[RMDB]
RNA sequence: GGGAACGACUCGAGUAGAGUCGAAAAUCGGGAGGCUGAGGCAGGAGAAUGGCAUGAACCUGGGAGGCGGAGCUUGCAGUGAGCUGAGAUCGCGCCACUGCACUGCAGCCUGGGUGACAGAGCGAGAGUGAAUAACUAGCUUCGGCUAGUUAUUCACAAAAGAAACAACAACAACAAC
Reactivity to DMS in 0.01 (KOAc 150mM, MgCl2 10mM, bicine 150mM(pH8.5), 24C), signal-to-noise 2, nucleotides 027 to 126: u010c060g000g010g010a070g000g010c060u000g010a070g000g020c070a070g000g000a050g010a060a080u010g010g020c060a100u000g020a220a060c020c000u000g000g020g020a070g000g000c010g000g010a050g010c110u000u000g010c000a020g020u000g000a210g020c000u000g010a100g020a120u010c130g020c080g000c050c000a020c000u000g000c000a010c050u010g000c020a040g000c020c000u010g010g010g010u010g000a090c090a030g000a060g010c050g000a050g010a160
Reactivity to 2A3 in 0.01 (KOAc 150mM, MgCl2 10mM, bicine 150mM(pH8.5), 24C), signal-to-noise 2, nucleotides 027 to 126: u160c010g030g010g020a020g010g050c060u040g030a050g040g050c050a020g020g060a060g040a110a080u130g080g000c040a060u070g020a000a000c010c010u020g040g000g030a040g030g000c000g010g010a010g080c110u100u030g000c000a000g000u010g040a060g050c040u070g070a110g010a220u200c080g010c020g040c110c000a010c000u010g030c010a020c020u040g000c010a010g040c000c010u010g020g000g020u010g000a030c040a010g040a010g070c040g040a020g010a010
Chemical mapping of a 177-nucleotide RNA with DMS and 2A3. Source: RMDB library OK2TRN, as collected in RNAgym. The RNA was probed in 150 mM KOAc, 10 mM MgCl2 and 150 mM bicine (pH 8.5) at 24 C.